Background: This 177-nucleotide RNA was probed chemically with DMS.
[RMDB]
RNA sequence: GGGAACGACUCGAGUAGAGUCGAAAAAGGGUGAUAGGUACUACUGGAGACACCCCCGCUCCCCCAGAAACGGAUGACCCCUAUCAGAUAAAGUCCAGAAAUGCCGAGAACAUGGCUAAGGCCAACCCAUUAAAGACCCAUUCGUGGGUCUUUAAUGAAAAGAAACAACAACAACAAC
Reactivity to DMS in 0.01 (KOAc 150mM, MgCl2 10mM, bicine 150mM(pH8.5), 24C), signal-to-noise 4, nucleotides 027 to 126: a070g010g020g020u000g010a100u010a060g010g020u000a070c070u000a100c080u000g000g000a090g000a110c100a100c020c010c010c020c030g010c070u000c020c000c020c060c040a120g010a040a080a100c120g000g000a050u010g010a140c060c030c040c020u000a090u010c070a070g010a110u010a050a040a090g000u010c010c020a080g000a070a070a110u000g000c020c010g000a120g010a080a100c130a070u010g010g010c030u010a040a120g010g010c010c060a040a100c070c050
Conditions: 150 mM KOAc, 10 mM MgCl2 and 150 mM bicine (pH 8.5), 24 C.